[RMDB]
RNA sequence: GGGAACGACUCGAGUAGAGUCGAAAAGAUAUGGAACCAGGGUCGCGUUCGCGAAGAACUCGGAAACGAGGGAGCGAACGACCCGACACCUGGUUCCUAAGUCAAAACCAGGCGUUCGCGCCUGGAACUACUCUACGUUGUUCGCAACGUAGAGUAGAAAAGAAACAACAACAACAAC
Reactivity to DMS in 0.01 (KOAc 150mM, MgCl2 10mM, bicine 150mM(pH8.5), 24C), signal-to-noise 3, nucleotides 027 to 126: g000a040u010a300u000g000g010a010a020c010c010a010g000g010g040u000c020g000c020g010u000u000c010g030c000g000a100a160g010a100a190c010u000c020g010g000a140a040a160c010g020a020g000g000g000a110g020c000g000a000a020c000g000a080c260c300c060g000a000c000a070c010c000u000g000g000u000u000c000c000u000a000a080g020u010c030a070a080a100a160c020c000a010g000g010c000g050u000u010c240g010c020g010c000c000u000g000g000a030a100
Reactivity to 2A3 in 0.01 (KOAc 150mM, MgCl2 10mM, bicine 150mM(pH8.5), 24C), signal-to-noise 2, nucleotides 027 to 126: g010a020u070a040u180g000g010a000a000c000c000a010g010g020g010u000c000g010c010g010u000u000c000g000c020g130a300a070g020a050a030c010u000c010g010g030a120a040a030c010g000a000g010g020g020a030g000c020g000a000a000c000g000a020c000c030c000g010a000c030a210c000c000u000g000g000u000u000c000c000u000a030a010g010u000c010a010a030a050a100c010c010a010g000g010c000g030u060u150c300g000c000g000c190c010u000g000g010a000a000